[RMDB]
RNA sequence: GGGAACGACUCGAGUAGAGUCGAAAAGGGGUCCUGACAUGAUCUCCCGUGGAGCGAGGAUCUAUACUGAAGCCUCCACGGUAUAGGGAGCUCCACAGGAGAUCAACAGCAGGACGGAGGCACCCAAAAGAAGACCUAGAUUCGUCUAGGUCUUCAAGAUCCCUUGGUGAUUCGUCACCAAGGGAUCAAAAGAAACAACAACAACAAC
Reactivity to 2A3 in 0.01 (KOAc 150mM, MgCl2 10mM, bicine 150mM(pH8.5), 24C), signal-to-noise 2, nucleotides 027 to 156: g040g000g050g080u000c000c000u000g020a020c110a300u300g000a000u010c000u000c000c010c020g010u000g020g000a000g000c010g030a300g020g010a000u010c000u010a000u000a000c000u020g000a100a020g030c000c000u000c000c000a000c000g010g010u000a000u000a010g000g000g000a010g000c000u000c020c000a000c000a000g050g000a000g000a000u010c000a040a000c000a000g010c000a000g000g000a010c020g010g000a000g000g030c000a010c000c000c020a070a140a000a030g010a000a000g000a000c000c000u010a000g000a000u060u060c190g000u010c240u000a000g000g000u000c000u000u000c000a000a000